This 177-nucleotide RNA was probed chemically with DMS and 2A3. For 2A3, 2,349 sequencing reads were counted. It was measured as part of the RMDB library OK2TRN. 2A3 adducts were read by reverse transcription with SuperScript II with manganese.
RNA sequence: GGGAACGACUCGAGUAGAGUCGAAAAUGUACUUCGCUGCGGAGCGUGCCCUGGGUUUCAUGGGCCUGCAUGAGAUGGCCCCGUCUCCGUCCACGGACAGCCACUACGUCGCCGAAGACGUUACCAGCACUGACUAACACUUCGGUGUUAGUCAGUGAAAAGAAACAACAACAACAAC
Reactivity to DMS in 0.01 (KOAc 150mM, MgCl2 10mM, bicine 150mM(pH8.5), 24C), signal-to-noise 3, nucleotides 027 to 126: u020g010u000a080c040u000u000c030g000c060u010g020c060g010g000a150g010c040g010u000g020c020c010c020u000g010g020g010u010u010u000c060a120u000g000g000g000c000c020u000g010c080a140u010g020a070g000a100u000g010g010c000c070c020c130g000u000c040u010c050c090g000u000c050c080a040c070g000g000a080c120a160g000c050c020a050c030u000a090c070g000u010c090g020c080c040g020a060a030g010a070c060g010u010u010a090c030c010a210g000
Reactivity to 2A3 in 0.01 (KOAc 150mM, MgCl2 10mM, bicine 150mM(pH8.5), 24C), signal-to-noise 1, nucleotides 027 to 126: u070g010u070a190c020u010u010c040g000c000u070g060c030g010g060a080g020c040g030u070g000c010c000c010u090g150g000g000u050u120u130c060a110u130g010g030g000c020c020u040g040c010a110u110g060a030g020a120u040g030g000c000c000c000c060g020u010c000u000c030c040g050u000c040c030a050c010g000g050a030c070a040g010c000c010a030c040u090a030c030g020u050c000g010c100c040g040a010a010g010a010c000g010u000u030a060c010c020a020g030